[RMDB]
RNA sequence: GGGAACGACUCGAGUAGAGUCGAAAAUGUUCGAUUAUAUUGUGCGGAAGGAGCGGCUCGAAGAGUCUGAAGCUCGUCAUUUCUUCCGGCAGCUCGUCAGUGCGAUCGCUUUCGUUCAUUCACAAGAACUCCCGGUAAUGUUCGCAUUACCGGGAGUAAAAGAAACAACAACAACAAC
Reactivity to DMS in 0.01 (KOAc 150mM, MgCl2 10mM, bicine 150mM(pH8.5), 24C), signal-to-noise 2, nucleotides 027 to 126: u010g000u000u010c030g010a070u010u010a120u010a080u010u000g030u000g000c020g010g000a040a050g010g010a030g010c040g010g030c020u010c300g000a040a080g010a030g010u010c070u000g010a150a170g000c090u010c130g020u010c040a070u000u000u010c010u000u000c010c150g010g000c000a030g010c020u000c030g000u010c020a060g010u020g010c050g010a050u000c110g000c160u000u010u000c020g010u000u000c030a060u000u010c090a050c130a160a150g010a100